Conditions: 150 mM KOAc, 10 mM MgCl2 and 150 mM bicine (pH 8.5), 24 C. Structure probing data (DMS and 2A3) for a 177-nucleotide construct. For DMS, 1,577 sequencing reads were counted. High DMS reactivity at an A or C suggests that its Watson-Crick edge is free. For DMS the reverse transcriptase was MarathonRT.
RNA sequence: GGGAACGACUCGAGUAGAGUCGAAAACCGAAUGGUCGAGUAGCACUCAGAGGGAGGAAUCCACACGGAGUAGAGCAGAGAAAUCACCUCCAGAGGACCCCUUCAGCGAACAGAGAGCGCUGCGAGCGUCAUUCUAUAGGUUCGCCUAUAGAAUGACAAAAGAAACAACAACAACAAC
Reactivity to DMS in 0.01 (KOAc 150mM, MgCl2 10mM, bicine 150mM(pH8.5), 24C), signal-to-noise 3, nucleotides 027 to 126: c000c020g000a110a100u010g010g040u000c050g000a150g040u010a040g040c030a060c020u000c040a110g010a120g020g010g020a040g000g010a050a110u000c010c000a050c170a300c100g000g010a010g020u000a110g000a120g010c170a150g000a150g000a050a100a120u010c020a180c150c000u000c020c030a080g010a290g020g030a070c020c030c000c010u000u000c030a060g000c010g010a090a050c180a140g000a150g000a040g000c020g000c000u010g020c070g010a100g020c140
Reactivity to 2A3 in 0.01 (KOAc 150mM, MgCl2 10mM, bicine 150mM(pH8.5), 24C), signal-to-noise 3, nucleotides 027 to 126: c010c000g030a060a130u160g090g020u120c030g000a010g010u060a020g020c010a010c020u000c020a020g010a020g060g030g010a190g030g010a110a120u000c000c010a050c010a010c130g010g010a020g010u170a080g040a060g100c170a030g030a000g060a220a140a050u040c010a040c010c020u000c010c000a010g010a010g010g010a010c000c000c010c000u010u010c020a020g040c030g060a060a030c060a040g080a000g000a020g080c010g000c010u030g040c020g030a020g030c050